Chemical mapping of a 177-nucleotide RNA with 2A3 and DMS. The 2A3 profile rests on 1,843 reads. Reactivities are rounded to 0.1 and cut off at 0 and 3.
RNA sequence: GGGAACGACUCGAGUAGAGUCGAAAAUGAGAAGCAUUCGUGCUUCUCAGAAAUGCUGCCCAAAGAGGUCCUGGGGGUGUCUGGGCUGCUAAACUCAUCAGCUAACCGCGAUCUUCGGAUCGCGGAAAACGGAAUUUAUGUUCGCAUAAAUUCCGUUAAAAGAAACAACAACAACAAC
Reactivity to 2A3 in 0.01 (KOAc 150mM, MgCl2 10mM, bicine 150mM(pH8.5), 24C), signal-to-noise 1, nucleotides 027 to 126: u040g010a010g000a000a000g010c000a000u060u120c180g070u030g000c000u010u000c010u000c000a000g010a000a040a000u100g050c020u020g000c010c000c000a080a120a020g080a040g010g050u090c040c040u100g070g020g010g000g030u040g040u060c030u020g000g000g030c000u010g010c000u040a020a040a040c060u050c090a140u040c050a090g100c030u060a120a080c000c000g000c000g000a000u020c000u030u000c050g080g000a000u010c020g020c000g000g000a000a000
Reactivity to DMS in 0.01 (KOAc 150mM, MgCl2 10mM, bicine 150mM(pH8.5), 24C), signal-to-noise 3, nucleotides 027 to 126: u000g000a010g010a010a000g010c000a040u000u020c200g000u000g000c000u000u000c000u000c000a020g010a110a130a080u010g020c070u000g030c010c000c010a040a120a190g010a100g020g000u000c010c020u000g000g040g010g010g020u020g000u010c040u000g020g010g000c020u010g010c060u000a070a100a080c090u000c070a060u010c080a070g010c120u000a100a230c000c000g020c010g000a000u000c000u000u010c170g020g000a010u000c010g000c010g000g000a000a020